Structure probing data (2A3 and DMS) for a 177-nucleotide construct. The reactions ran in a buffer of 150 mM KOAc, 10 mM MgCl2 and 150 mM bicine (pH 8.5), at 24 C. Reactivities are given for positions 27 through 126. It was measured as part of the RMDB library OK2TST. The DMS profile rests on 507 reads.
[RMDB]
RNA sequence: GGGAACGACUCGAGUAGAGUCGAAAAGAUAGUAAGAACUGAUACCCAGAACAAACAUCGCGCCAGUGACAUAACCUGCUGCAACUGUGUGAACAAAUUUCACCUGAGCAACUGGGUUUAGCACUAACGAUCUCGAUUGAUUCGUCAAUCGAGAUCGAAAAGAAACAACAACAACAAC
Reactivity to 2A3 in 0.01 (KOAc 150mM, MgCl2 10mM, bicine 150mM(pH8.5), 24C), signal-to-noise 1, nucleotides 027 to 126: g020a040u070a040g100u160a080a140g080a220a020c050u060g040a050u100a120c020c020c000a020g060a080a020c110a050a010a030c050a000u040c030g000c060g010c050c040a020g000u040g010a030c000a050u040a000a000c010c010u020g000c030u020g040c000a050a050c050u030g040u020g000u020g240a030a030c040a120a300a090u070u060u030c020a030c010c010u020g000a010g000c010a000a010c050u080g000g000g200u000u010u050a040g000c000a000c020u020a030a050
Reactivity to DMS in 0.01 (KOAc 150mM, MgCl2 10mM, bicine 150mM(pH8.5), 24C), signal-to-noise 1, nucleotides 027 to 126: g000a120u000a070g020u000a060a070g000a200a140c130u000g000a260u010a200c070c120c030a130g010a070a190c090a150a160a110c130a000u000c140g000c060g020c000c120a040g010u000g000a000c010a090u000a020a000c020c010u000g000c030u000g020c000a040a130c060u000g000u000g060u000g060a000a000c260a060a060a110u000u000u000c000a020c000c040u010g000a300g000c020a020a010c010u000g050g000g000u010u010u010a080g010c020a010c070u000a090a140